[RMDB]
RNA sequence: GGGAACGACUCGAGUAGAGUCGAAAAUAUUGAGUCACCUGUAUCUGGCAAUCUUUUUUCACUUUGUGCAGGCGUGCCAUUAUGUUUAGUCACUUCAGAUGUUGCACUUAAUGUAGACUGAGAUUCACAUAACGUGCACUUUCGAGUGCACGUUAUGAAAAGAAACAACAACAACAAC
Reactivity to DMS in 0.01 (KOAc 150mM, MgCl2 10mM, bicine 150mM(pH8.5), 24C), signal-to-noise 3, nucleotides 027 to 126: u010a090u010u010g010a110g010u000c020a090c020c020u000g010u000a070u000c070u000g010g010c120a080a090u010c030u000u000u010u020u000u010c070a080c060u000u000u000g020u000g000c050a050g010g040c130g030u010g000c010c030a030u020u000a060u000g010u000u000u000a090g010u010c070a030c080u000u010c080a090g000a060u000g020u000u010g020c060a030c050u010u000a080a060u000g010u000a070g000a080c100u000g010a070g000a100u000u000c100a160
Reactivity to 2A3 in 0.01 (KOAc 150mM, MgCl2 10mM, bicine 150mM(pH8.5), 24C), signal-to-noise 2, nucleotides 027 to 126: u150a030u010u140g020a000g050u020c000a010c010c030u000g030u060a060u080c040u040g030g030c020a030a080u050c050u000u170u050u040u090u090c040a080c050u100u060u110g040u040g020c000a000g040g030c030g020u040g000c000c010a000u110u080a090u120g070u050u070u060a040g020u070c030a020c070u050u030c060a050g000a150u080g130u160u100g010c060a040c000u050u100a030a030u080g050u050a040g020a040c040u100g060a060g020a110u130u090c070a010